[RMDB]
RNA sequence: GGGAACGACUCGAGUAGAGUCGAAAAGAUAUGGAGUGCUACCCACCUUCAGUAUGCGUUGAAAUCGGAAACGAUGGAGCAUAUGAGAAGAGGCACUCCUAAGUCAAAAGGUCGGUUCGCCGACCAACAAAUAUUUCAUCUUCGGAUGAAAUAUUUGAAAAGAAACAACAACAACAAC
Reactivity to DMS in 0.01 (KOAc 150mM, MgCl2 10mM, bicine 150mM(pH8.5), 24C), signal-to-noise 6, nucleotides 027 to 126: g010a090u010a140u000g000g010a040g010u000g010c000u000a120c020c010c030a300c110c010u000u000c010a300g000u000a000u000g010c000g010u000u010g000a070a090a020u000c000g000g000a080a080a140c010g010a010u000g010g000a140g010c000a010u000a010u000g000a200g000a020a010g000a100g010g000c000a010c000u010c000c000u010a010a070g010u020c150a080a070a110a120g000g010u000c000g010g010u000u010c260g020c000c000g010a010c000c000a010a060
Reactivity to 2A3 in 0.01 (KOAc 150mM, MgCl2 10mM, bicine 150mM(pH8.5), 24C), signal-to-noise 3, nucleotides 027 to 126: g100a040u210a170u260g000g000a010g010u010g010c010u100a250c030c010c000a040c020c010u020u020c010a010g020u020a000u020g010c070g210u300u090g070a030a040a000u010c000g010g030a030a040a050c000g000a000u020g020g010a020g010c070a000u000a010u030g300a300g010a030a010g000a020g020g000c000a000c000u000c000c000u020a030a000g080u030c090a000a000a080a190g010g000u010c010g000g040u060u120c240g040c090c020g000a010c000c000a000a000

The record gives the reactivity of an RNA of 177 nucleotides to DMS and 2A3. The DMS profile rests on 5,685 reads. DMS adducts were read by reverse transcription with MarathonRT. Reactivities are given for positions 27 through 126. Values are in units of 0.01, from 0 to 300, in steps of 10. The reactions ran in a buffer of 150 mM KOAc, 10 mM MgCl2 and 150 mM bicine (pH 8.5), at 24 C.